The record gives the reactivity of an RNA of 177 nucleotides to DMS and 2A3. Reactivities are rounded to 0.1 and cut off at 0 and 3. The reactions ran in a buffer of 150 mM KOAc, 10 mM MgCl2 and 150 mM bicine (pH 8.5), at 24 C.
[RMDB]
RNA sequence: GGGAACGACUCGAGUAGAGUCGAAAAUUGGUGUCUUGAGAACGGAACAUCACCAGAUUUAAGUGGUACUUGGACAAUGAUGGAUGGAGAAGAGCAAAAAGAGUAUCCGAUUAAACCAUUGAUUGAGUCGUAAGAGCACGUUCGCGUGCUCUUACGAAAAAGAAACAACAACAACAAC
Reactivity to DMS in 0.01 (KOAc 150mM, MgCl2 10mM, bicine 150mM(pH8.5), 24C), signal-to-noise 2, nucleotides 027 to 126: u050u010g010g000u000g060u020c040u000u010g000a100g020a120a030c070g000g030a010a170c090a030u010c040a060c050c040a060g030a170u000u030u000a000a140g010u010g030g030u070a280c010u020u070g000g010a090c100a060a070u000g050a060u060g000g010a010u000g000g000a030g000a000a030g000a040g000c070a010a030a030a060a130g030a050g000u000a110u000c020c040g050a060u060u020a140a050a170c120c060a020u040u000g000a090u030u000g020a140g000
Reactivity to 2A3 in 0.01 (KOAc 150mM, MgCl2 10mM, bicine 150mM(pH8.5), 24C), signal-to-noise 2, nucleotides 027 to 126: u120u060g000g020u010g030u000c080u030u070g040a110g020a140a040c050g010g040a100a020c000a010u040c000a000c020c010a020g070a120u070u100u110a080a120g070u050g040g030u050a050c010u020u100g000g000a010c000a040a080u150g000a070u070g130g000a020u080g010g000a060g000a020a030g000a010g050c050a000a020a050a000a000g040a000g000u030a030u000c000c000g000a000u100u090a000a000a160c030c030a030u000u120g160a190u150u140g000a050g110